[RMDB]
RNA sequence: GGGAACGACUCGAGUAGAGUCGAAAAGGGUGAGACCUAGGAACCGUAGGGGUAUUCUCAAAGGAAGCUUUUGCAGUGACGCCGAUGUAAGUGGGAUAUAACAACAGAACUCGUAUGAGUAGCCUAAUAAAUCGGACCUUCUUCGGAAGGUCCGAAACUAAUGAUACCACUUCGGUGGUAUCAUUAGAAAAGAAACAACAACAACAAC
Reactivity to DMS in 0.01 (KOAc 150mM, MgCl2 10mM, bicine 150mM(pH8.5), 24C), signal-to-noise 2, nucleotides 027 to 156: g000g040g010u000g010a140g000a050c050c030u020a110g000g000a090a070c000c020g000u000a090g000g000g000g010u000a050u010u000c030u010c030a150a160a210g020g020a130a130g010c080u000u000u000u000g000c020a050g030u000g020a110c050g070c030c000g020a090u000g010u020a030a080g010u020g010g010g020a090u000a070u010a090a110c060a060a120c100a130g000a060a090c050u000c020g040u000a090u020g000a070g010u000a140g010c040c030u000a060a120u000a050a040a130u010c000g000g010a000c000c000u000u000c000u000u000c300g000g000a030a010g000g010u000c000c010g000a000a000a070
Reactivity to 2A3 in 0.01 (KOAc 150mM, MgCl2 10mM, bicine 150mM(pH8.5), 24C), signal-to-noise 3, nucleotides 027 to 156: g020g030g010u070g010a090g030a070c030c010u060a040g060g030a040a030c050c030g050u140a040g010g010g000g000u040a090u120u090c070u050c040a070a070a030g040g010a050a040g060c040u090u050u130u100g020c020a030g030u030g060a030c020g020c040c000g020a010u080g020u100a050a070g000u060g040g000g020a020u050a010u070a120a060c080a000a000c010a040g080a090a050c010u040c060g060u200a090u230g010a000g020u040a020g020c020c030u110a150a090u150a120a040a080u090c000g000g000a000c000c010u000u000c010u020u020c100g090g000a000a000g010g000u000c000c000g010a000a000a000

An RNA of 207 nucleotides, treated with DMS and 2A3 and read out base by base. 2A3 adducts were read by reverse transcription with SuperScript II with manganese. It was measured as part of the RMDB library M2RFPK. Reactivities are given for positions 27 through 156. For DMS the reverse transcriptase was MarathonRT. The reactions ran in a buffer of 150 mM KOAc, 10 mM MgCl2 and 150 mM bicine (pH 8.5), at 24 C.